[RMDB]
RNA sequence: GGGAACGACUCGAGUAGAGUCGAAAAGAUUAACUCGCUGAUGCUUUCCGGAGCGAUCACUUCGCUGGUGGUGUUAAUCAACUAUCUGCUGCCGCAAAAAGCGUUUGGUCUGCUGAUGGCGCUGGUGCACUUUACACGCUUUCGAGCGUGUAAAGUGAAAAGAAACAACAACAACAAC
Reactivity to 2A3 in 0.01 (KOAc 150mM, MgCl2 10mM, bicine 150mM(pH8.5), 24C), signal-to-noise 2, nucleotides 027 to 126: g000a010u070u050a070a030c000u020c070g000c050u070g030a100u070g020c050u050u080u050c030c010g000g020a020g040c020g030a040u050c010a040c100u100u050c020g020c060u060g010g030u000g030g000u020g030u050u060a040a080u060c050a040a080c030u100a070u060c010u070g000c050u040g000c000c000g010c040a040a120a050a080a000g040c030g020u020u070u100g080g080u000c050u090g040c010u030g000a080u080g020g030c010g000c040u030g040g050u030g000
Reactivity to DMS in 0.01 (KOAc 150mM, MgCl2 10mM, bicine 150mM(pH8.5), 24C), signal-to-noise 3, nucleotides 027 to 126: g010a060u010u000a030a050c030u000c050g020c050u000g000a120u000g010c100u000u000u020c050c050g020g000a050g010c010g000a020u000c150a070c190u010u000c040g010c020u000g020g020u000g010g010u000g010u000u010a020a090u000c090a120a120c170u010a060u000c020u000g000c050u000g040c040c020g010c110a080a070a070a140a040g000c040g000u000u010u000g020g020u000c040u010g010c030u000g000a070u010g010g020c090g000c030u010g010g020u000g000